[RMDB]
RNA sequence: GGGAACGACUCGAGUAGAGUCGAAAAAAAAAACAUAGCGUUUCACAAUGUGCGCCAUUAACAUUGUUUAUGCAAGCACGUUUCGCAAUGUACGGCGCAGAAACAUUGCCAACACAAAUACGCUUCACGAUGUGCGGCACAGAAACAUCGCAAAAAACUGACUAUAAAACUUCGGUUUUAUAGUCAGAAAAGAAACAACAACAACAAC
Reactivity to DMS in 0.01 (KOAc 150mM, MgCl2 10mM, bicine 150mM(pH8.5), 24C), signal-to-noise 1, nucleotides 027 to 156: a000a000a110a100a110a000c100a070u000a130g060c010g010u000u020u000c070a110c060a110a090u000g030u010g010c000g040c010c020a150u030u000a050a050c030a000u000u010g000u010u000u010a030u010g020c050a150a150g000c180a150c040g060u000u000u000c060g040c070a060a010u060g050u010a030c150g000g000c030g030c030a090g000a110a090a090c020a040u000u000g000c000c050a090a030c030a080c060a040a070a130u010a010c080g000c000u000u000c010a000c020g040a030u020g090u060g040c030g060g000c090a140c180a150g030a100a030a090c000a000u000c000g030c000a000a060a120a000a030a050
Reactivity to 2A3 in 0.01 (KOAc 150mM, MgCl2 10mM, bicine 150mM(pH8.5), 24C), signal-to-noise 4, nucleotides 027 to 156: a000a000a000a010a000a020c100a050u160a020g020c020g010u020u060u050c070a030c010a050a030u050g010u030g030c010g020c060c010a070u180u100a070a010c010a010u020u030g070u030u100u090a100u100g070c060a050a080g050c060a040c100g020u050u070u080c030g010c000a000a010u010g000u010a020c050g030g000c060g010c050a000g040a000a030a000c010a000u010u030g000c010c050a100a010c050a060c030a090a180a010u170a060c010g000c000u010u030c030a040c000g000a000u000g000u010g000c000g030g040c100a050c010a150g090a000a000a000c000a020u000c000g020c060a040a100a010a040a000a030
Chemical mapping of a 207-nucleotide RNA with DMS and 2A3.
As a SHAPE reagent, 2A3 marks flexible, mostly unpaired nucleotides at the ribose 2'-OH.
Values cover nucleotides 27 to 156.